[RMDB]
RNA sequence: GGGAACGACUCGAGUAGAGUCGAAAAGGGGACCAGCUGGCCACAUGGUGCUGCUUUUCAGGUUAGGGGAGAGGUGGCCCUGAGGGACAGCCCAGCUCUGAGUCUCAGUCGCUGAUCACUGCCAGGGCCAAAGGGGUCAAUUCGUUGACCCCUUUGGAAAAGAAACAACAACAACAAC
Reactivity to 2A3 in 0.01 (KOAc 150mM, MgCl2 10mM, bicine 150mM(pH8.5), 24C), signal-to-noise 1, nucleotides 027 to 126: g060g000g000g010a000c030c000a010g010c000u020g020g040c010c010a080c010a060u170g000g000u100g030c020u010g000c000u000u030u040u050c050a060g120g010u140u170a050g020g040g010g060a080g010a000g070g030u030g000g000c000c000c000u000g010a110g040g020g030a040c050a010g020c010c000c000a000g010c010u000c040u030g070a060g080u050c030u000c060a050g060u020c060g010c090u070g060a100u090c050a020c050u010g040c000c020a030g030g030g000
Reactivity to DMS in 0.01 (KOAc 150mM, MgCl2 10mM, bicine 150mM(pH8.5), 24C), signal-to-noise 2, nucleotides 027 to 126: g010g010g010g010a100c080c070a120g010c020u010g010g000c000c050a080c050a080u010g010g020u010g020c030u000g000c050u010u000u000u000c020a090g010g020u010u010a070g020g010g000g010a060g000a030g010g020u010g000g000c020c010c020u000g000a180g000g010g000a080c070a050g000c130c060c040a080g000c000u000c040u000g000a120g000u010c070u010c030a050g000u000c120g020c020u000g020a070u010c060a080c050u010g030c080c010a020g000g000g000

An RNA of 177 nucleotides, treated with 2A3 and DMS and read out base by base. For DMS the reverse transcriptase was MarathonRT. For 2A3, 1,507 sequencing reads were counted. It was measured as part of the RMDB library OK2TST. Reactivities are rounded to 0.1 and cut off at 0 and 3.